RNA sequence: GGGAACGACUCGAGUAGAGUCGAAAAGCAACAUCUAAGCGGUCAGAUUGUGGCUCAAUUUUGCAAAUUGUGCCUUGUAGUACGUUUCGGAUUGACGUUUUUUGUGGCUUUUGCAAGGCUAAAGAAAACCGUAUAGGGAAUUCGUUCCCUAUACGGUAAAAGAAACAACAACAACAAC
Reactivity to DMS in 0.01 (KOAc 150mM, MgCl2 10mM, bicine 150mM(pH8.5), 24C), signal-to-noise 6, nucleotides 027 to 126: g000c030a060a090c070a030u010c050u000a060a060g020c030g010g020u010c060a090g000a100u010u000g030u000g000g010c000u000c010a020a010u000u010u000u000g020c170a060a110a040u010u000g010u000g010c000c010u000u010g020u000a080g010u000a100c070g010u010u000u000c110g020g010a090u010u000g010a090c100g010u000u000u000u000u000u000g020u010g010g010c020u000u000u000u000g010c090a070a140g000g010c030u010a040a100a150g000a100a090a100
Reactivity to 2A3 in 0.01 (KOAc 150mM, MgCl2 10mM, bicine 150mM(pH8.5), 24C), signal-to-noise 4, nucleotides 027 to 126: g010c010a010a040c000a040u030c010u070a050a050g140c020g010g090u070c020a020g030a250u100u150g110u090g070g010c000u000c020a030a040u040u060u060u110g040c060a030a020a020u030u020g020u030g000c000c000u040u130g080u040a070g020u030a050c050g010u030u050u120c070g030g030a060u050u090g040a070c070g040u040u000u000u000u040u110g110u060g040g030c030u000u040u090u040g040c030a050a050g040g000c030u080a080a060a070g170a030a270a030